[RMDB]
RNA sequence: GGGAACGACUCGAGUAGAGUCGAAAAGCUGAUCGAAAAACAGAUUCCUUGCGUCCUCGUCGGCAGUGCAGGUAUUGGGAAAUCAGUUGGUGCUGGCUAUUAUAUUCGACUUACGCUGGUUUAGUGGAAACCUGCCAAGGUUCGCCUUGGCAGGUUUAAAAGAAACAACAACAACAAC
Reactivity to DMS in 0.01 (KOAc 150mM, MgCl2 10mM, bicine 150mM(pH8.5), 24C), signal-to-noise 1, nucleotides 027 to 126: g000c000u000g030a110u000c050g000a080a070a010a140a080c050a080g020a110u000u000c000c000u000u030g020c050g020u000c010c010u020c040g010u020c030g000g010c070a030g010u000g000c070a050g060g000u010a030u040u040g000g020g010a020a050a060u000c070a040g010u020u000g010g000u010g000c030u020g000g000c000u000a020u010u000a080u020a140u010u030c040g020a020c020u000u020a060c020g000c050u000g000g000u000u000u000a060g050u020g000g010
Reactivity to 2A3 in 0.01 (KOAc 150mM, MgCl2 10mM, bicine 150mM(pH8.5), 24C), signal-to-noise 1, nucleotides 027 to 126: g000c000u010g040a050u030c040g070a110a020a060a000a000c000a010g000a030u000u010c000c000u070u110g000c000g040u010c010c000u050c010g120u040c010g010g040c020a020g000u000g110c010a000g020g020u070a050u050u250g050g000g040a000a050a060u070c060a070g040u000u030g000g000u010g020c010u010g000g080c030u000a070u300u020a160u160a000u040u000c000g050a050c000u010u030a030c070g020c000u000g030g040u030u130u070a120g000u000g140g090

Record summary
Structure probing data (DMS and 2A3) for a 177-nucleotide construct. For 2A3, 506 sequencing reads were counted. The DMS profile rests on 2,426 reads. 2A3 adducts were read by reverse transcription with SuperScript II with manganese. For DMS the reverse transcriptase was MarathonRT. Source: RMDB library OK1LIB, as collected in RNAgym.